Record summary:
This 177-nucleotide RNA was probed chemically with DMS and 2A3. For DMS, 899 sequencing reads were counted. The RNA was probed in 150 mM KOAc, 10 mM MgCl2 and 150 mM bicine (pH 8.5) at 24 C. It was measured as part of the RMDB library OK2TRN. DMS (dimethyl sulfate) methylates the pairing face of unpaired adenines and cytosines. For DMS the reverse transcriptase was MarathonRT.

[RMDB]
RNA sequence: GGGAACGACUCGAGUAGAGUCGAAAAAUGUGCGCUCCGUGGGCUACUCGGAGCUCUUCUCUCUGUCCCGCGAGGAUGUCCUGGCGGCCAUGAAGGACUACCCCGAUGCCCAGGAGAUUCUGCAGACGCGUUUAUCGUAGUUCGCUACGAUAAACGCAAAAGAAACAACAACAACAAC
Reactivity to DMS in 0.01 (KOAc 150mM, MgCl2 10mM, bicine 150mM(pH8.5), 24C), signal-to-noise 1, nucleotides 027 to 126: a050u070g000u000g020c190g040c000u000c010c000g010u000g010g020g010c020u040a050c210u000c030g010g020a020g000c040u000c040u000u000c010u000c090u000c070u010g030u000c150c000c010g020c010g000a020g010g000a300u000g000u030c000c000u000g000g030c030g000g030c300c040a040u000g010a050a040g000g000a030c140u000a130c070c050c020c000g030a040u000g000c000c000c020a160g000g000a000g030a020u000u000c020u000g020c020a070g000a190c150
Reactivity to 2A3 in 0.01 (KOAc 150mM, MgCl2 10mM, bicine 150mM(pH8.5), 24C), signal-to-noise 2, nucleotides 027 to 126: a000u050g000u020g080c060g000c010u040c010c060g210u080g000g040g000c070u220a020c040u130c020g000g010a000g020c010u000c000u010u010c020u000c000u020c070u050g060u130c030c020c010g000c010g070a030g080g160a300u260g300u220c030c000u060g120g000c010g020g020c060c010a140u220g010a030a040g000g000a030c030u090a080c050c040c050c030g000a090u300g000c000c000c000a010g000g000a040g080a020u200u090c130u170g000c010a010g020a130c030